[RMDB]
RNA sequence: GGGAACGACUCGAGUAGAGUCGAAAAGAGUCCGAGAAAGUCCAGGAAGUGGAAACAUGUUAUGAAUCUGAGAGCAUCGAAACAUCUUCACUAAGUAGUGCGCCCACAGAUAGUUCUGGUGCUAGCUUUCACUUCAGCAUACAGAGGUCACUAACUACCGGGAUAUAACUUUCGAGUUAUAUCCCGGAAAAGAAACAACAACAACAAC
Reactivity to DMS in 0.01 (KOAc 150mM, MgCl2 10mM, bicine 150mM(pH8.5), 24C), signal-to-noise 1, nucleotides 027 to 156: g010a290g040u000c010c040g020a130g000a110a100a150g000u000c030c050a140g040g000a120a080g070u000g000g000a120a020a030c050a120u000g000u010u000a170u000g000a050a050u010c080u000g000a140g020a080g000c000a130u000c030g000a090a060a080c040a110u000c030u010u000c040a050c040u000a120a080g000u000a060g050u030g020c030g000c070c030c010a160c170a010g020a070u000a080g000u010u000c040u000g040g000u000g060c000u000a050g000c130u000u000u000c030a010c080u010u000c050a080g020c030a100u020a130c120a020g030a090g010g040u000c070a000c010u000a050a060c020u000a220
Reactivity to 2A3 in 0.01 (KOAc 150mM, MgCl2 10mM, bicine 150mM(pH8.5), 24C), signal-to-noise 3, nucleotides 027 to 156: g040a020g030u000c000c020g030a030g060a100a130a000g070u070c030c030a020g010g020a010a030g030u010g030g080a060a080a050c030a040u090g020u110u100a090u100g080a080a040u060c070u080g020a040g010a000g150c020a010u030c000g030a040a010a000c010a050u020c020u130u040c020a010c060u100a160a060g080u090a030g010u140g020c060g030c050c040c010a090c030a020g050a050u070a050g010u050u050c090u100g010g000u010g020c030u020a040g010c000u060u140u060c050a040c010u020u040c030a010g000c030a040u130a110c020a020g030a010g030g010u020c020a020c040u100a150a000c020u100a080